RNA sequence: GGGAACGACUCGAGUAGAGUCGAAAAGGAUGGCUCCAGCUGUAGCGGGAAGGUCCCACUCCUCUCAGCCUGGCUUUCAGGCUUGAGGUUUCCUUCUUGGAUCUGAGUACCUGUGGUGUAACAGGCACACUGCGGAAUAAUUCGUUAUUCCGCAGUGAAAAGAAACAACAACAACAAC
Reactivity to 2A3 in 0.01 (KOAc 150mM, MgCl2 10mM, bicine 150mM(pH8.5), 24C), signal-to-noise 4, nucleotides 027 to 126: g060g030a040u080g040g000c000u020c040c030a040g020c040u090g090u270a050g060c030g020g020g030a030a040g050g010u060c010c000c000a010c030u000c010c010u040c010u020c020a000g030c000c000u050g020g070c110u100u300u300c010a000g000g010c000u030u040g000a000g000g000u020u030u000c010c000u040u090c000u060u100g070g000a080u020c020u080g050a030g090u080a120c020c000u020g010u030g060g130u170g030u100a080a030c010a020g020g000c030a010
Reactivity to DMS in 0.01 (KOAc 150mM, MgCl2 10mM, bicine 150mM(pH8.5), 24C), signal-to-noise 6, nucleotides 027 to 126: g010g010a070u000g010g010c030u000c030c040a080g010c050u010g010u000a090g030c080g000g000g010a050a060g010g000u000c040c010c030a150c130u000c010c000u010c000u010c220a030g010c000c010u000g000g010c300u000u010u010c010a020g010g000c010u000u010g020a020g000g000u000u000u000c010c030u000u010c090u000u000g000g010a130u000c060u000g000a140g010u010a080c010c010u000g020u000g010g010u010g000u010a130a050c030a020g000g010c180a150
About this RNA:
Chemical mapping of a 177-nucleotide RNA with 2A3 and DMS. Reactivities are given for positions 27 through 126. DMS adducts were read by reverse transcription with MarathonRT. For 2A3, 5,736 sequencing reads were counted.